The data come from the RNA Mapping Database (RMDB), library 15KLIB.
An RNA of 170 nucleotides, treated with 2A3 and DMS and read out base by base.

RNA sequence: GGGAACGACUCGAGUAGAGUCGAAAACUCCUUAGUAAGUGCUAUAAGGCUAUGAAUGCAUAUCCUCUUGUAGUCACUCCUCUUGUUUCAGCAGGCAUAUUUGGUGUAAAACCAGCUGUGUCUUUUGUCGCUGUUAUGUUCGCAUAACAGAAAAGAAACAACAACAACAAC
Reactivity to 2A3 in 0.01 (KOAc 150mM, MgCl2 10mM, bicine 150mM(pH8.5), 24C), signal-to-noise 9, nucleotides 027 to 129: c030u020c000c000u020u010a050g050u130a130a020g010u010g020c000u010a010u010a070a020g040g000c020u010a050u100g140a300a100u280g160c030a030u030a070u140c000c030u120c030u010u030g020u030a010g110u160c020a010c010u050c010c020u090c000u060u080g030u020u060u030c020a030g010c010a000g020g000c010a010u010a020u040u030u030g040g000u050g020u130a100a170a030a020c000c000a000g000c010u010g000u000g000u000c000u030u070u080u090g180u100c090g000
Reactivity to DMS in 0.01 (KOAc 150mM, MgCl2 10mM, bicine 150mM(pH8.5), 24C), signal-to-noise 6, nucleotides 027 to 129: c090u000c020c020u000u050a070g040u050a060a000g010u000g040c010u030a020u020a040a050g000g000c170u010a060u000g000a230a160u040g000c010a000u030a080u010c000c040u050c100u060u000g010u000a020g030u070c050a040c000u020c090c080u000c040u040u030g000u030u020u000c000a080g000c060a000g000g010c030a000u030a050u020u020u020g020g020u030g030u050a090a080a130a040c040c030a030g030c020u010g040u000g000u000c040u000u020u000u010g020u070c150g030

Values cover nucleotides 27 to 129. As a SHAPE reagent, 2A3 marks flexible, mostly unpaired nucleotides at the ribose 2'-OH. The RNA was probed in 150 mM KOAc, 10 mM MgCl2 and 150 mM bicine (pH 8.5) at 24 C. DMS adducts were read by reverse transcription with MarathonRT.